Chemical mapping of a 207-nucleotide RNA with DMS and 2A3. For DMS the reverse transcriptase was MarathonRT. The data come from the RNA Mapping Database (RMDB), library RNAMAK. The DMS profile rests on 12,285 reads.
[RMDB]
RNA sequence: GGGAACGACUCGAGUAGAGUCGAAAAGUGUCUUCGGACACGUCUGCGCGUACUACAUGGACAUGCUCUGUGGGACAUUAGUACUUCCCAAAUAGGAAGUACGACGAUGUCCCACUGAGCAACAGCCAUGUAUCGCUAAUCGCGGGUUCGCCCGCAAAAAGUGACAAGUAUUCGUACUUGUCACUUUAAAAGAAACAACAACAACAAC
Reactivity to DMS in 0.01 (KOAc 150mM, MgCl2 10mM, bicine 150mM(pH8.5), 24C), signal-to-noise 4, nucleotides 027 to 156: g030u000g020u010c010u000u020c280g040g020a020c000a000c020g000u000c050u000g020c110g010c050g020u000a100c090u000a020c010a000u000g000g000a060c060a300u000g010c000u000c010u000g030u010g010g000g000a030c000a020u000u010a230g010u000a010c000u000u000c000c000c020a030a160a240u000a050g020g020a030a020g000u010a010c000g000a070c130g000a010u010g060u000c000c000c010a010c000u000g000a010g010c000a010a020c080a160g010c010c000a030u000g000u000a020u000c030g000c030u000a080a130u000c130g000c000g010g000g000u000u000c180g040c020c000c010g030c000a010a030
Reactivity to 2A3 in 0.01 (KOAc 150mM, MgCl2 10mM, bicine 150mM(pH8.5), 24C), signal-to-noise 4, nucleotides 027 to 156: g010u000g000u000c010u010u080c220g170g000a000c000a000c000g010u020c050u180g140c080g010c010g010u050a090c030u000a020c020a010u010g020g030a030c020a140u070g010c000u000c020u070g020u000g000g000g000a010c000a000u010u000a020g020u000a000c010u010u010c010c010c060a120a260a080u280a090g000g000a000a000g000u000a000c010g030a060c140g010a010u000g000u000c000c000c000a000c000u000g000a000g000c000a000a000c010a000g000c000c000a010u010g000u000a000u030c000g000c020u030a050a090u120c110g000c000g000g000g020u010u050c220g120c010c010c010g000c000a060a180